[RMDB]
RNA sequence: GGGAACGACUCGAGUAGAGUCGAAAAGCAAGAGCGUUCGCGCUCUUGCAAACAAAAUGCGUCCAAAGGGUGAGGAUGGGAAGGACGCAAAACCCACACCCAAAACACUCUGCUUCGGCAGAGUGAAGAUGUCAAACAUGUUCGCAUGUUUGACAUCAAAAGAAACAACAACAACAAC
Reactivity to DMS in 0.01 (KOAc 150mM, MgCl2 10mM, bicine 150mM(pH8.5), 24C), signal-to-noise 2, nucleotides 027 to 126: g010c030a010a030g000a030g040c000g040u000u010c200g040c000g020c000u010c000u010u020g030c040a050a060a050c110a020a070a090a070u000g010c000g010u020c000c010a150a080a170g000g000g010u000g000a080g000g030a150u000g030g000g010a160a190g000g000a010c020g030c000a000a010a100a120c010c000c010a070c090a070c020c000c010a100a070a080a150c000a010c000u010c000u000g010c000u000u000c170g000g000c000a000g000a000g000u000g020a030a050
Reactivity to 2A3 in 0.01 (KOAc 150mM, MgCl2 10mM, bicine 150mM(pH8.5), 24C), signal-to-noise 3, nucleotides 027 to 126: g010c000a000a000g000a000g000c010g020u080u080c170g040c000g050c090u010c000u000u000g000c000a010a000a000c000a000a060a020a030u050g010c000g010u000c000c010a150a100a070g040g010g040u060g030a070g090g030a090u110g040g020g010a090a070g010g000a000c030g000c000a010a010a050a070c010c000c000a030c010a010c010c020c000a040a060a020a000c010a000c000u010c000u000g010c010u020u070c160g120g030c000a000g000a000g000u000g010a000a020
Source information
Chemical mapping of a 177-nucleotide RNA with DMS and 2A3. DMS adducts were read by reverse transcription with MarathonRT. Reactivities are given for positions 27 through 126. The data come from the RNA Mapping Database (RMDB), library M2PK50. The DMS profile rests on 1,865 reads. The RNA was probed in 150 mM KOAc, 10 mM MgCl2 and 150 mM bicine (pH 8.5) at 24 C.